[RMDB]
RNA sequence: GGGAACGACUCGAGUAGAGUCGAAAAGAUAUGGAGCCAAAGUCUUUUGACGGAGUGCUAUCGGAAACGAUAGGCACUCCGAUAAGACUUUGGCUCCUAAGUCAAAACUACGGGUUCGCCCGUAGAACGCAAUAGUAGACUUCGGUCUACUAUUGCGAAAAGAAACAACAACAACAAC
Reactivity to DMS in 0.01 (KOAc 150mM, MgCl2 10mM, bicine 150mM(pH8.5), 24C), signal-to-noise 1, nucleotides 027 to 126: g000a050u020a300u010g000g000a000g020c000c000a010a010a030g000u000c000u000u000u010u000g010a230c150g010g000a020g020u000g000c000u000a020u000c000g010g000a040a040a100c010g000a010u000a030g010g030c000a000c000u010c020c000g020a010u010a000a020g010a020c000u000u000u000g000g010c000u000c000c000u000a000a060g010u000c010a050a110a240a190c000u010a010c000g000g000g000u000u020c300g010c060c010c000g000u000a000g020a040a120